Structure probing data (DMS and 2A3) for a 177-nucleotide construct. The RNA was probed in 150 mM KOAc, 10 mM MgCl2 and 150 mM bicine (pH 8.5) at 24 C. High DMS reactivity at an A or C suggests that its Watson-Crick edge is free. The DMS profile rests on 50,575 reads. It was measured as part of the RMDB library OK1LIB.
[RMDB]
RNA sequence: GGGAACGACUCGAGUAGAGUCGAAAACGAUAUGCAUUGAUCGCAUGUAGACUAUUAAUGCGUAGGAAUUACUAUGCUCGUAGUCUGUAUUAGUGUCAUGAAAAUGACACUAAUGCGACGAGCAUAAGGUAGUGCUGGAUUUCGAUCUAGUACUACCAAAAGAAACAACAACAACAAC
Reactivity to DMS in 0.01 (KOAc 150mM, MgCl2 10mM, bicine 150mM(pH8.5), 24C), signal-to-noise 8, nucleotides 027 to 126: c050g010a160u000a010u000g000c000a030u000u000g010a030u000c050g010c040a130u060g030u040a070g000a080c020u000a010u010u010a020a010u020g000c000g030u000a010g000g010a120a090u030u040a100c000u010a010u000g000c000u000c050g000u010a050g010u020c070u010g030u010a060u010u000a000g010u000g000u000c000a000u000g000a110a060a120a020u000g000a000c010a000c000u000a000a000u000g010c010g010a020c000g000a010g000c000a000u000a010a060
Reactivity to 2A3 in 0.01 (KOAc 150mM, MgCl2 10mM, bicine 150mM(pH8.5), 24C), signal-to-noise 9, nucleotides 027 to 126: c020g010a040u000a000u020g000c000a010u000u010g010a010u000c010g000c010a010u120g090u150a040g030a070c000u000a000u010u010a010a000u010g000c000g000u000a010g000g040a040a010u100u030a060c000u000a000u000g000c000u000c010g020u020a060g080u000c090u070g000u000a000u000u000a000g000u000g000u000c000a000u010g030a040a010a010a000u000g000a000c000a000c000u000a000a000u000g000c000g000a000c000g000a000g000c000a000u000a020a020

DMS adducts were read by reverse transcription with MarathonRT.